[RMDB]
RNA sequence: GGGAACGACUCGAGUAGAGUCGAAAAAGGCACACUUCUAUAUCAUUUUACAAACAGAGUGACAGAGAGGUUCACCUCUGAGCUCUGUUAGUGAACGCAGAGCUUACAGGUGAAGCGUUGUAAGAACUGCGUUCAUAGUUCUGUGAAUGCUGUGCCACGAGUCAAGAAUGUUCGCAUUCUUGACUCGAAAAGAAACAACAACAACAAC
Reactivity to 2A3 in 0.01 (KOAc 150mM, MgCl2 10mM, bicine 150mM(pH8.5), 24C), signal-to-noise 5, nucleotides 027 to 156: a000g000g000c010a000c000a000c030u030u040c060u130a200u090a100u230c070a110u100u140u150u220a070c050a040a020a000c010a000g010a000g030u060g200a130c020a010g020a000g020a050g030g100u250u200c100a130c080c020u000c010u010g000a000g000c000u010c000u000g010u000u010a000g000u000g000a000a000c010g020c010a000g010a010g000c010u000u000a000c000a020g110g030u190g250a100a020g110c050g140u080u030g000u010a010a000g000a050a040c000u000g000c010g000u000u000c000a010u020a000g020u030u060c040u060g110u040g050a050a010u030g010c080u000g020u010g000c000c000a000
Reactivity to DMS in 0.01 (KOAc 150mM, MgCl2 10mM, bicine 150mM(pH8.5), 24C), signal-to-noise 2, nucleotides 027 to 156: a070g030g030c010a030c010a060c040u000u010c030u000a130u000a090u010c050a130u000u000u000u000a240c050a200a060a070c080a020g000a020g010u010g000a150c020a020g010a040g030a090g020g010u000u000c110a110c060c000u000c010u020g000a300g010c010u010c000u020g020u000u000a060g020u000g000a040a030c050g000c010a000g000a120g020c000u000u000a020c010a080g010g000u000g010a100a080g020c040g010u000u000g010u000a020a070g000a040a070c010u010g020c070g040u000u010c050a000u000a060g040u000u000c090u000g010u010g000a060a070u000g010c010u000g030u000g020c010c000a170
Conditions: 150 mM KOAc, 10 mM MgCl2 and 150 mM bicine (pH 8.5), 24 C. This 207-nucleotide RNA was probed chemically with 2A3 and DMS. DMS adducts were read by reverse transcription with MarathonRT. Source: RMDB library OK3TST, as collected in RNAgym.